[RMDB]
RNA sequence: GGGAACGACUCGAGUAGAGUCGAAAAGAAACAUGGUUCGCCAUGUUUCAAAGAAGCUCAUAAAGACGCAAACAACGGCGUCGCCGUGAGCAAACGGCGAAAAAAGACUUAUCUUCGGAUAAGUCAACCAUUCCUUUUAGUUCGCUAAAAGGAAUGGAAAAGAAACAACAACAACAAC
Reactivity to DMS in 0.01 (KOAc 150mM, MgCl2 10mM, bicine 150mM(pH8.5), 24C), signal-to-noise 5, nucleotides 027 to 126: g000a010a010a000c000a010u000g000g010u000u020c260g030c010c010a030u000g000u000u000u000c000a050a080a110g000a140a140g010c020u000c010a050u000a070a130a220g000a020c010g000c000a040a060a120c220a120a130c210g000g000c020g000u000c000g000c180c140g000u000g000a060g020c060a030a050a050c080g000g000c060g000a000a050a060a080a100a060g010a020c000u000u000a000u000c000u000u000c210g000g000a020u000a000a010g000u000c000a040a050
Reactivity to 2A3 in 0.01 (KOAc 150mM, MgCl2 10mM, bicine 150mM(pH8.5), 24C), signal-to-noise 5, nucleotides 027 to 126: g000a000a000a000c000a000u010g010g020u040u060c080g020c030c000a000u010g000u000u000u000c010a000a000a010g060a070a020g010c000u010c040a060u130a090a170a030g010a000c010g000c010a040a180a230c060a160a120c160g100g000c010g000u010c020g000c000c010g020u030g020a040g010c010a030a040a000c030g050g020c070g070a140a040a000a000a010a000g000a000c000u000u010a000u010c010u020u090c240g040g000a010u000a000a000g000u000c000a000a000